RNA sequence: GGGAACGACUCGAGUAGAGUCGAAAAUUUUCAUAAACCCCCUCUCUAAGGGAAAUGUUGGAGAUAUAGUUGUGUUUAACCUUUCGGGAAGUUGGACGGUUCACAGAGUCUAUGCUAUAACAAGUGAGACAUCUCCGUAAUUCGUUACGGAGAUGUCAAAAGAAACAACAACAACAAC
Reactivity to DMS in 0.01 (KOAc 150mM, MgCl2 10mM, bicine 150mM(pH8.5), 24C), signal-to-noise 1, nucleotides 027 to 126: u000u020u000u000c070a080u000a070a070a300c080c000c000c010c030u000c140u000c050u000a050a070g000g000g000a050a080a060u000g000u010u000g000g040a040g020a100u000a120u010a080g010u000u000g000u000g010u000u000u010a070a130c040c010u000u000u010c090g000g030g040a060a080g000u010u000g000g010a050c040g000g000u010u010c180a010c070a050g010a120g000u000c040u000a040u000g020c060u000a100u020a070a080c100a060a120g010u000g000a180
The record gives the reactivity of an RNA of 177 nucleotides to DMS. The RNA was probed in 150 mM KOAc, 10 mM MgCl2 and 150 mM bicine (pH 8.5) at 24 C.